[RMDB]
RNA sequence: GGGAACGACUCGAGUAGAGUCGAAAAUCCAGCAAGAGGCGUGGAGAGAGGGCCGCGGUGCUCUGGAGUAGAGGCUCUGCCUUCGAAACACCAUCGAUUGUCCCUUCUUCUUUACCUUCUUCUGGCUCUUCUUGGAGACGCGACCGGUGGCACCCCUACAGAGAAUUGUGUUCGCACAAUUCUCUGUAAAAGAAACAACAACAACAAC
Reactivity to 2A3 in 0.01 (KOAc 150mM, MgCl2 10mM, bicine 150mM(pH8.5), 24C), signal-to-noise 1, nucleotides 027 to 156: u000c000c000a000g030c190a000a000g010a000g020g080c110g050u020g000g010a000g010a010g000a000g000g000g000c030c020g030c060g050g000u000g010c020u000c020u020g000g000a020g020u000a010g000a010g000g010c080u120c250u300g040c010c020u170u210c010g000a000a050a000c020a030c140c020a000u000c000g070a140u050u260g070u120c000c020c000u050u060c050u120u010c000u020u010u020a010c000c000u000u000c000u000u000c000u010g010g000c010u030c010u110u010c010u050u080g120g010a080g010a040c070g040c030g080a130c020c060g070g020u000g020g050c040a050c010c010c030c000u000
This 207-nucleotide RNA was probed chemically with 2A3. Values cover nucleotides 27 to 156. The 2A3 profile rests on 962 reads.